[RMDB]
RNA sequence: GGGAACGACUCGAGUAGAGUCGAAAAGGGGUCUUCUGCUCCGAGGUAAAGCUUUUGACGAGCUGAAGCCUCCACGGCUCGAUAAGCUUUACUACCCACCGGAGCUGAAGACGGAGGCACCCAAACCACCUACUACAGUUCGCUGUAGUAGGUGGAACUAGUCUACUUGCUUCGGCAAGUAGACUAGAAAAGAAACAACAACAACAAC
Reactivity to 2A3 in 0.01 (KOAc 150mM, MgCl2 10mM, bicine 150mM(pH8.5), 24C), signal-to-noise 1, nucleotides 027 to 156: g070g020g030g010u000c000u050u000c030u120g000c010u020c000c010g010a020g030g000u010a000a010a000g010c060u070u300u300u300g150a150c040g000a000g010c010u010g020a100a030g020c010c000u020c000c000a000c000g020g000c000u000c010g110a200u080a300a030g000c000u000u010u000a010c020u040a070c010c080c010a030c010c010g010g000a000g010c030u040g000a000a000g000a000c050g000g000a000g000g000c000a040c000c000c000a030a010a040c000c000a000c010c010u000a000c010u000a000c000a020g050u060u130c130g100c160u000g000u000a000g000u000a000g000g000u000g000g000a000a000